[RMDB]
RNA sequence: GGGAACGACUCGAGUAGAGUCGAAAAAAGCGGGAAUCAAAAAAAGGAUAGGUGCAGAGACUCAAUGGAAGCUGUUCUAACAAAUAGAGUUGACUGCAUCGGUAAGGGAAUUCUUUCCUUUUAUCCAAACGACAGAAAGGAUGACCUUGUAUACGUAGAAUUAGUGCAUGUUCGCAUGCACUAAUUCAAAAGAAACAACAACAACAAC
Reactivity to DMS in 0.01 (KOAc 150mM, MgCl2 10mM, bicine 150mM(pH8.5), 24C), signal-to-noise 1, nucleotides 027 to 156: a000a010g000c080g000g000g010a060a100u000c030a000a000a000a110a100a150a110g000g010a070u000a020g050g010u000g000c030a000g030a300g010a000c000u000c030a030a280u010g000g010a040a070g000c070u030g010u000u000c020u000a080a280c050a040a050a080u000a140g010a050g000u020u000g010a100c040u000g010c040a080u010c030g030g000u030a010a090g030g000g010a100a030u010u020c140u000u010u010c010c050u000u000u000u000a040u000c060c090a000a010a120c130g000a100c100a050g010a010a040a020g000g000a090u000g010a170c050c000u000u000g000u000a140u000a050c090g000u000a160
Reactivity to 2A3 in 0.01 (KOAc 150mM, MgCl2 10mM, bicine 150mM(pH8.5), 24C), signal-to-noise 2, nucleotides 027 to 156: a020a000g110c140g000g010g080a040a030u220c160a070a130a050a060a040a050a050g050g000a050u070a060g000g030u000g000c020a000g010a010g000a050c000u010c010a060a090u080g010g030a050a020g060c100u070g110u150u010c060u090a050a090c010a070a060a040u150a040g000a010g040u010u030g080a210c000u000g020c000a000u010c020g010g010u020a020a000g030g020g010a020a040u060u030c000u010u060u040c020c000u030u080u030u180a060u030c020c000a100a080a000c100g080a040c020a040g000a030a010a000g020g000a030u020g020a040c010c000u000u000g050u050a150u020a070c030g030u020a020